[RMDB]
RNA sequence: GGGAACGACUCGAGUAGAGUCGAAAAGCAAGGGCUCGAAGAGGGAUCCACGGGGAAACCUACUCGAGCGAGGCGGAGAUCGAGCGCCAGUUCUUGCGCGGCGAACUGAAGUUGCUUCGGCUUCUUCUUGUUCGCGUCCUGCGUGGAACGUCUCCUUCAUCCAAAAUAAGUUCGCUUAUUUUGGAUGAAAAGAAACAACAACAACAAC
Reactivity to 2A3 in 0.01 (KOAc 150mM, MgCl2 10mM, bicine 150mM(pH8.5), 24C), signal-to-noise 4, nucleotides 027 to 156: g060c050a050a120g150g080g000c010u020c030g110a170a080g010a050g050g040g010a000u050c050c050a090c210g300g000g010g010a040a050a030c030c010u040a110c010u030c000g000a000g000c010g010a020g010g000c030g010g020a080g010a140u210c130g040a030g070c020g030c040c010a010g020u020u020c070u230u200g020c000g000c000g020g000c000g000a000a000c000u020g000a000a010g010u010u010g000c000u040u090c270g120g000c000u000u010c000u010u000c000u040u240g000u000u000c000g000c000g010u050c000c030u050g000c010g000u010g020g010a010a010c010g030u010c030u020c020c010u000u000